[RMDB]
RNA sequence: GGGAACGACUCGAGUAGAGUCGAAAAGGCUGUUGAAAUACAUUCCUGUGCCGGCAAUACAGUGUGUAUGGAGGUCUCAAUGGCUCGGAAGUGCCAGCAAACCGGCGUAGAUAUUAGCAGACGAAUGAUAGGAUGCAUCCGUUCGCGGAUGCAUCAACAUAAUAUUUUCGUUCGCGAAAAUAUUAUGAAAAGAAACAACAACAACAAC
Reactivity to DMS in 0.01 (KOAc 150mM, MgCl2 10mM, bicine 150mM(pH8.5), 24C), signal-to-noise 3, nucleotides 027 to 156: g040g010c000u010g020u000u000g000a090a070a090u000a050c010a070u000u000c300c010u000g020u000g010c020c010g020g010c030a080a080u000a040c020a070g030u000g000u000g000u010a070u000g010g010a120g020g030u000c040u000c090a080a170u000g030g010c010u000c020g020g020a140a180g020u000g010c010c030a110g010c050a040a130a060c000c020g020g000c040g020u000a030g000a170u000a070u000u000a090g020c040a070g010a080c030g000a050a070u000g010a130u000a150g000g010a030u010g000c000a010u000c000c000g010u000u010c280g020c030g000g000a020u000g000c010a000u000c010a020a090
Reactivity to 2A3 in 0.01 (KOAc 150mM, MgCl2 10mM, bicine 150mM(pH8.5), 24C), signal-to-noise 6, nucleotides 027 to 156: g050g010c030u020g020u280u030g040a050a040a010u100a030c010a020u040u080c020c000u010g010u070g030c020c010g020g000c050a060a040u100a120c020a030g110u020g010u010g010u150a020u040g030g040a030g010g050u010c020u020c080a080a140u080g000g000c030u040c060g030g050a130a050g020u020g060c000c010a020g030c070a040a030a050c020c000g020g000c010g010u040a050g040a130u090a050u210u190a070g030c050a020g030a080c080g080a110a050u090g050a040u110a100g140g000a000u000g000c000a000u000c010c000g030u030u070c220g000c010g090g000a000u000g000c000a000u000c000a000a000